[RMDB]
RNA sequence: GGGAACGACUCGAGUAGAGUCGAAAAGGGGUCAAUUCGAUAAGACCCAUAGAGCGAGGAUCAUACCUGAAGCCUCCACGGGUAUGGGAGCUCUUAAGGUCUUUUGACGAAUUGACGGAGGCACCCAAACUUAGACACCCUUCGGGGUGUCUAAGAACUUCCAGACAUAGUUCGCUAUGUCUGGAAGAAAAGAAACAACAACAACAAC
Reactivity to 2A3 in 0.01 (KOAc 150mM, MgCl2 10mM, bicine 150mM(pH8.5), 24C), signal-to-noise 2, nucleotides 027 to 156: g020g010g100g000u010c010a000a010u000u010c000g080a070u080a300a030g000a000c010c000c000a000u050a000g000a000g000c020g020a230g040g000a000u000c000a000u000a000c010c010u040g050a090a020g020c000c000u000c000c000a010c000g010g000g010u000a000u000g000g000g010a000g030c010u030c020u040u030a150a020g000g000u000c020u030u110u140u260g240a070c000g000a000a000u000u010g000a000c020g010g000a000g000g010c000a020c020c000c000a020a060a090c000u010u000a010g000a000c010a010c010c020c030u060u140c290g020g000g000g010u000g000u010c000u000a000a000g000a000a000